[RMDB]
RNA sequence: GGGAACGACUCGAGUAGAGUCGAAAAUUAUUGGAGAGUUUGAUCCUGGCUCAGGACGAACGCUGGCGGCGUGCCUAAUACAUGCAAGUCGAGCGGGGUUUUAAAAGCUUGCUUUUAAAACUUUAGCCACUGAUGAAUUUUUCGAAAUUCAUCAGUGAAAAGAAACAACAACAACAAC
Reactivity to 2A3 in 0.01 (KOAc 150mM, MgCl2 10mM, bicine 150mM(pH8.5), 24C), signal-to-noise 2, nucleotides 027 to 126: u070u050a080u080u110g050g030a080g010a020g100u050u080u140g080a130u060c000c020u030g130g060c060u070c110a010g000g030a020c010g010a060a000c010g000c040u020g050g000c030g050g000c030g000u010g000c000c000u070a100a020u120a120c060a010u090g020c030a090a050g030u020c020g060a000g010c000g000g030g000g000u000u030u030u040a020a020a000a000g000c020u060u090g040c000u020u050u000u020a020a040a000a010c000u070u030u080a040g020c030
Reactivity to DMS in 0.01 (KOAc 150mM, MgCl2 10mM, bicine 150mM(pH8.5), 24C), signal-to-noise 4, nucleotides 027 to 126: u010u010a090u010u000g000g010a110g010a090g010u000u000u010g010a130u000c000c020u000g030g000c100u020c050a100g000g000a070c050g000a060a060c030g020c040u010g010g020c040g020g000c040g020u000g010c030c060u010a080a090u020a170c060a040u000g000c050a060a130g020u000c060g010a090g010c020g010g000g000g000u000u000u010u000a010a010a020a010g010c020u010u000g030c000u000u000u000u000a010a010a010a020c000u000u010u010a090g010c090
The record gives the reactivity of an RNA of 177 nucleotides to 2A3 and DMS.
The DMS profile rests on 5,677 reads.
Conditions: 150 mM KOAc, 10 mM MgCl2 and 150 mM bicine (pH 8.5), 24 C.
DMS (dimethyl sulfate) methylates the pairing face of unpaired adenines and cytosines.